[RMDB]
RNA sequence: GGGAACGACUCGAGUAGAGUCGAAAAGACUUGUGGUUCGCCACAAGUCAAAUAAGCAUGUAGAAAUCGCCAAACUACAUGCAUCGAAAGAAAGGCCAUAAAAAAGGACAUGCUUCGGCAUGUCCAACUACUUUAGCCUGUUCGCAGGCUAAAGUAGAAAAGAAACAACAACAACAAC
Reactivity to DMS in 0.01 (KOAc 150mM, MgCl2 10mM, bicine 150mM(pH8.5), 24C), signal-to-noise 1, nucleotides 027 to 126: g000a000c010u000u020g040u000g010g010u000u000c260g060c000c000a030c000a020a010g030u020c000a010a040a030u010a130a100g020c000a000u010g010u000a000g000a030a010a010u000c300g000c020c000a120a080a070c000u010a000c000a020u030g000c000a040u000c140g010a080a100a060g010a030a130a050g030g020c010c010a120u010a000a050a010a130a120a090g000g000a010c000a000u000g000c010u050u020c240g030g000c000a000u000g040u000c000c020a000a060
Reactivity to 2A3 in 0.01 (KOAc 150mM, MgCl2 10mM, bicine 150mM(pH8.5), 24C), signal-to-noise 3, nucleotides 027 to 126: g000a000c000u010u000g000u010g050g030u040u080c210g050c100c000a010c000a010a030g000u010c010a000a000a020u030a030a030g000c000a000u000g000u010a000g020a040a080a030u050c050g000c020c010a030a010a010c010u000a000c010a020u000g020c000a040u130c050g190a150a160a120g110a110a140a030g030g000c020c010a080u280a080a160a000a000a010a050g000g010a010c000a000u010g000c000u050u090c180g070g000c000a000u000g000u000c000c000a000a000
An RNA of 177 nucleotides, treated with DMS and 2A3 and read out base by base. For 2A3 the reverse transcriptase was SuperScript II with manganese. DMS adducts were read by reverse transcription with MarathonRT. It was measured as part of the RMDB library M2PK50. Reactivities are given for positions 27 through 126. For 2A3, 2,668 sequencing reads were counted. The RNA was probed in 150 mM KOAc, 10 mM MgCl2 and 150 mM bicine (pH 8.5) at 24 C.